[RMDB]
RNA sequence: GGGAACGACUCGAGUAGAGUCGAAAAUACAAGGACGGACUACCCAUCACGGCUAGCUCCCGCAUCACUGCCAUCUUCAACUUCGGCUAUGUCUCCCUGAACAUCUUGCACCUGAGAGCCGAGGAUGUGAGUAGCAAACUUUCGAGUUUGCUACUCAAAAAGAAACAACAACAACAAC
Reactivity to 2A3 in 0.01 (KOAc 150mM, MgCl2 10mM, bicine 150mM(pH8.5), 24C), signal-to-noise 2, nucleotides 027 to 126: u150a000c030a040a010g090g030a020c030g010g020a010c010u050a050c020c000c000a010u080c040a020c050g030g010c030u020a020g000c030u030c040c010c000g020c030a030u060c020a000c060u040g000c020c020a080u060c050u140u060c030a100a080c030u050u020c020g030g000c030u030a060u130g050u010c020u010c050c010c000u020g110a050a020c020a080u040c010u070u130g030c030a070c020c040u110g030a100g010a010g020c010c040g000a000g020g000a040u070g020
Reactivity to DMS in 0.01 (KOAc 150mM, MgCl2 10mM, bicine 150mM(pH8.5), 24C), signal-to-noise 5, nucleotides 027 to 126: u010a090c140a070a110g000g010a080c080g000g010a090c050u000a090c090c020c030a120u010c110a100c120g010g010c070u000a070g010c060u000c030c000c030g000c100a060u010c060a060c070u000g000c040c020a060u010c050u000u000c060a070a100c060u000u000c020g010g010c020u000a070u000g010u000c050u010c020c020c020u000g010a070a070c090a070u010c050u010u000g000c060a080c030c040u000g010a130g010a080g020c010c020g010a060g010g010a080u010g020